[RMDB]
RNA sequence: GGGAACGACUCGAGUAGAGUCGAAAAUGAGAAGCAUUCGUGCUUCUCAGAAAUGCUGCCCAAAGAGCACCUGGGGGUGUCUGGGCUGCUAAACUCAUCAGCUAACCGCGAUCUUCGGAUCGCGGAACUUCGAUAUCGUAUUCGUACGAUAUCGAAGAAAAGAAACAACAACAACAAC
Reactivity to DMS in 0.01 (KOAc 150mM, MgCl2 10mM, bicine 150mM(pH8.5), 24C), signal-to-noise 2, nucleotides 027 to 126: u000g000a010g010a000a000g010c000a020u000u020c180g010u000g010c000u000u000c010u000c010a010g020a070a090a100u000g000c020u000g000c000c020c000a040a140a110g000a230g000c000a020c000c010u010g000g010g010g050g020u010g000u010c070u000g000g030g010c020u000g000c010u000a040a050a110c040u000c020a090u000c200a140g000c200u000a120a140c000c000g000c000g020a030u000c000u000u000c150g040g000a050u000c000g010c010g000g030a010a010
Reactivity to 2A3 in 0.01 (KOAc 150mM, MgCl2 10mM, bicine 150mM(pH8.5), 24C), signal-to-noise 3, nucleotides 027 to 126: u030g010a000g000a000a000g000c020a010u040u160c220g070u050g000c000u000u020c000u000c000a000g000a010a060a010u110g010c000u030g000c010c010c000a030a230a010g090a020g010c000a010c050c060u200g220g060g140g000g000u000g000u030c010u020g010g020g000c030u010g010c010u030a060a060a050c030u050c070a170u070c050a070g080c060u110a080a100c010c010g010c000g020a000u000c000u020u080c250g100g010a010u000c000g000c000g000g000a000a010